The record gives the reactivity of an RNA of 177 nucleotides to 2A3 and DMS. Values cover nucleotides 27 to 126. For 2A3 the reverse transcriptase was SuperScript II with manganese. DMS adducts were read by reverse transcription with MarathonRT.
RNA sequence: GGGAACGACUCGAGUAGAGUCGAAAAAACGGCUGCUGUGAAAAUUGAUCUGAUUGAGAGGGAUAACUUUCAGAUCUCUUUCGAUUACCUGGUUUGUCACUUACCAGGGGAGCCCAGAUGCAUGGCACGUCCUAUCGAUAUUCGUAUCGAUAGGACGAAAAGAAACAACAACAACAAC
Reactivity to 2A3 in 0.01 (KOAc 150mM, MgCl2 10mM, bicine 150mM(pH8.5), 24C), signal-to-noise 1, nucleotides 027 to 126: a010a000c050g050g010c050u020g000c010u000g000u030g100a110a050a060a110u150u070g000a010u000c030u040g010a000u000u070g070a160g010a050g100g080g020a020u060a110a180c050u000u100u100c040a070g010a100u000c000u000c020u010u030u000c000g040a030u020u080a060c000c000u020g030g120u060u050u070g210u080c040a060c130u050u070a030c000c010a010g000g000g010g050a020g030c000c040c010a030g050a040u090g010c010a040u010g070g020c010a010
Reactivity to DMS in 0.01 (KOAc 150mM, MgCl2 10mM, bicine 150mM(pH8.5), 24C), signal-to-noise 1, nucleotides 027 to 126: a070a010c130g010g010c090u000g020c030u000g030u000g000a040a090a110a070u020u010g010a030u000c020u010g010a030u000u000g040a110g000a070g020g000g000a100u030a080a110c190u000u010u010c150a060g000a000u000c000u000c010u000u000u010c020g000a030u000u010a060c010c010u000g010g000u000u000u000g030u000c170a070c180u000u000a020c030c000a020g000g000g000g030a100g010c070c020c010a090g010a060u000g000c040a020u000g000g010c050a160